RNA sequence: GGGAACGACUCGAGUAGAGUCGAAAAAGGCAGCUUCCCGGCUUUUAAGCUACGGACGAUGCAAACGUAGCAGGCAUCGAAAUUUCGGCCCUUCGAAAAGCUGAGAUGAGCUCAGCAAGGGAAUCAAACUACUUUGACCAUUCGUGGUCAAAGUAGUAAAAGAAACAACAACAACAAC
Reactivity to DMS in 0.01 (KOAc 150mM, MgCl2 10mM, bicine 150mM(pH8.5), 24C), signal-to-noise 2, nucleotides 027 to 126: a040g000g000c020a040g020c100u000u000c030c010c000g000g010c020u000u020u000u000a040a140g010c020u000a020c060g010g000a140c080g020a030u020g000c130a070a070a160c030g020u000a030g000c000a120g000g030c020a020u000c070g000a030a170a120u000u000u000c040g000g000c040c000c060u020u000c100g000a070a050a080a180g000c010u010g000a060g000a300u010g000a120g000c010u010c000a010g010c000a060a020g000g000g010a030a100u020c180a060a110
Reactivity to 2A3 in 0.01 (KOAc 150mM, MgCl2 10mM, bicine 150mM(pH8.5), 24C), signal-to-noise 1, nucleotides 027 to 126: a000g080g000c030a040g000c050u010u030c000c000c000g010g020c000u060u060u070u200a090a010g010c000u010a010c030g010g090a070c070g150a180u120g100c100a110a100a000c050g040u030a030g000c010a000g060g000c000a050u070c060g050a060a080a140u080u090u040c010g030g000c020c020c000u010u020c030g070a110a010a020a040g000c020u030g000a000g010a080u140g190a080g140c000u010c010a000g000c030a000a010g020g020g070a030a060u090c050a060a100
Structure probing data (DMS and 2A3) for a 177-nucleotide construct. It was measured as part of the RMDB library M2PK90.